[RMDB]
RNA sequence: GGGAACGACUCGAGUAGAGUCGAAAAAUUUUCUUUGUUUCUCGAGUCUUUGCUAAUACAGGCAGUGUUUGCUACACUCCUAUAGAUGAGAUACCCUAUAAGAGUUUCUCUGAUAGUGGUUGCAUUCACCCUUAAAACAGUUCGCUGUUUUAAGGGUAAAAGAAACAACAACAACAAC
Reactivity to 2A3 in 0.01 (KOAc 150mM, MgCl2 10mM, bicine 150mM(pH8.5), 24C), signal-to-noise 2, nucleotides 027 to 126: a000u070u050u100u040c030u150u070u040g090u000u100u010c000u020c010g010a020g020u010c000u050u030u040g040c030u060a060a070u080a190c070a010g020g050c000a000g000u020g010u020u110u100g010c020u040a030c010a000c000u010c000c000u070a060u070a090g080a040u070g020a020g010a120u050a070c010c020c040u010a040u030a110a040g010a000g040u020u190u040c030u070c000u010g050a040u010a010g090u090g130g000u000u030g020c020a000u040u120c040
Reactivity to DMS in 0.01 (KOAc 150mM, MgCl2 10mM, bicine 150mM(pH8.5), 24C), signal-to-noise 2, nucleotides 027 to 126: a130u000u010u010u000c020u000u000u000g010u000u010u000c000u000c010g000a040g010u000c010u000u000u000g010c010u000a110a130u010a070c140a050g010g010c180a030g020u000g000u000u020u030g010c170u000a140c040a020c010u000c020c010u000a060u010a090g010a150u010g000a100g000a150u010a040c000c010c000u000a060u010a080a040g010a030g000u000u010u010c030u000c000u000g000a040u000a010g020u010g040g020u010u010g020c050a060u010u000c120
This 177-nucleotide RNA was probed chemically with 2A3 and DMS. DMS adducts were read by reverse transcription with MarathonRT. Reactivities are rounded to 0.1 and cut off at 0 and 3. Conditions: 150 mM KOAc, 10 mM MgCl2 and 150 mM bicine (pH 8.5), 24 C. The 2A3 profile rests on 1,103 reads. 2A3 adducts were read by reverse transcription with SuperScript II with manganese.